[RMDB]
RNA sequence: GGGAACGACUCGAGUAGAGUCGAAAAGCGCGCGAGGGUGGGGAGGAUUGUUUUUCGUCGUCGUCAAGGAGGGCGUAGGCGUAGUCGGGGUGCUUACCGUGGUUCUACGGAGGUACGCUCUGCGCGGCGAGGCUAAUAGUUUCGACUAUUAGCCUCGAAAAGAAACAACAACAACAAC
Reactivity to DMS in 0.01 (KOAc 150mM, MgCl2 10mM, bicine 150mM(pH8.5), 24C), signal-to-noise 2, nucleotides 027 to 126: g010c080g020c110g010c090g000a120g000g010g030u010g000g000g000g000a050g000g000a080u010u010g020u000u000u000u000u000c040g030u000c050g030u000c030g010u020c170a100a130g000g020a090g000g010g010c050g010u000a060g000g030c020g020u000a030g000u000c210g010g000g000g010u000g000c040u000u030a060c010c000g010u000g010g020u000u010c100u010a040c000g010g000a070g010g010u000a020c010g000c030u000c020u000g010c030g000c030g010g010
Reactivity to 2A3 in 0.01 (KOAc 150mM, MgCl2 10mM, bicine 150mM(pH8.5), 24C), signal-to-noise 1, nucleotides 027 to 126: g040c020g000c010g040c030g040a100g020g020g090u100g010g040g000g000a030g030g030a060u060u070g080u040u020u030u050u050c040g000u020c010g040u010c020g020u020c050a000a050g050g030a040g030g020g000c010g020u060a020g040g020c010g020u020a010g010u040c070g000g000g030g000u000g000c010u030u050a150c000c020g060u010g010g120u220u020c040u030a000c000g010g030a020g000g000u000a000c050g010c020u040c000u000g000c010g000c010g060g000